[RMDB]
RNA sequence: GGGAACGACUCGAGUAGAGUCGAAAAACCUCUCCGCUGGGCGUGGUGGGUGUUGACAUGAUAGUGUCUGAAGCGCGCACGGACAUAUCAACAGCAACACCGUAACAUCCACGCCUGUGCUGAAGCGCGCACGGCAACCGAAAGGUGCGAGGCUGCAGUACGAUAUAUUCUUCGGAAUAUAUCGUACAAAAGAAACAACAACAACAAC
Reactivity to 2A3 in 0.01 (KOAc 150mM, MgCl2 10mM, bicine 150mM(pH8.5), 24C), signal-to-noise 3, nucleotides 027 to 156: a000c000c010u000c040u040c010c040g000c020u030g000g020g000c010g010u020g020g030u000g020g020g010u010g000u020u000g090a180c100a160u130g030a030u020a050g300u040g010u040c000u020g040a240a100g000c020g020c010g000c010a030c020g020g000a000c000a000u020a000u010c050a060a140c050a110g220c000a000a000c010a010c000c010g030u040a030a020c020a130u090c020c020a000c000g000c000c000u010g010u020g000c000u040g010a120a030g000c000g010c010g020c040a010c000g050g000c010a080a090c030c000g060a140a030a030g040g000u020g010c010g010a080g050g030c080u140g050c040a040
Reactivity to DMS in 0.01 (KOAc 150mM, MgCl2 10mM, bicine 150mM(pH8.5), 24C), signal-to-noise 1, nucleotides 027 to 156: a020c010c130u010c000u030c000c040g000c050u020g020g010g010c020g030u000g010g030u000g000g040g060u010g050u010u030g030a070c080a300u000g000a010u000a030g020u010g060u030c000u030g020a030a150g010c000g020c010g020c020a300c050g010g010a000c010a040u000a050u000c020a060a070c130a180g030c040a020a020c000a020c000c020g030u010a080a170c030a160u010c000c020a000c030g000c030c000u000g010u000g030c020u220g000a060a080g040c040g020c020g000c000a100c040g020g050c030a040a040c000c020g020a090a100a090g000g040u000g010c030g020a130g020g030c020u000g000c100a250